The data come from the RNA Mapping Database (RMDB), library TTRDEL. The record gives the reactivity of an RNA of 177 nucleotides to 2A3 and DMS.

[RMDB]
RNA sequence: GGGAACGACUCGAGUAGAGUCGAAAAGAUAUGGACUUAUACUGAUGACCCAUGUAACAAGUGGUCGGAAACGACCACCGCCCAUGGCAAGGUAAGUCCUAAGUCAAAAGGUAAGUUCGCUUACCAAGGUAAUGACGAUCUUCGGAUCGUCAUUACCAAAAGAAACAACAACAACAAC
Reactivity to 2A3 in 0.01 (KOAc 150mM, MgCl2 10mM, bicine 150mM(pH8.5), 24C), signal-to-noise 1, nucleotides 027 to 126: g010a000u030a060u120g000g000a030c020u090u070a000u260a300c050u090g300a300u250g030a300c000c000c030a010u000g110u130a130a220c120a200a150g000u000g000g040u000c040g030g010a050a070a000c030g000a000c000c000a020c000c020g040c000c020c010a020u020g000g010c060a080a000g000g000u010a020a000g000u000c020c000u000a120a010g010u000c000a000a000a150a080g060g020u010a000a000g000u020u180c300g000c110u020u000a000c000c000a020a050
Reactivity to DMS in 0.01 (KOAc 150mM, MgCl2 10mM, bicine 150mM(pH8.5), 24C), signal-to-noise 2, nucleotides 027 to 126: g000a000u010a300u000g000g020a000c000u010u000a040u010a110c010u000g020a140u000g010a080c300c000c000a000u000g000u010a070a050c060a160a050g000u000g000g000u000c000g000g000a040a050a300c000g030a000c000c000a010c010c030g050c300c220c000a010u000g050g000c040a010a010g000g000u010a050a010g010u000c010c000u010a010a130g010u010c040a030a060a090a130g000g010u000a000a000g010u000u010c300g040c000u000u040a010c000c000a090a060
The reactions ran in a buffer of 150 mM KOAc, 10 mM MgCl2 and 150 mM bicine (pH 8.5), at 24 C. For 2A3 the reverse transcriptase was SuperScript II with manganese. Reactivities are rounded to 0.1 and cut off at 0 and 3.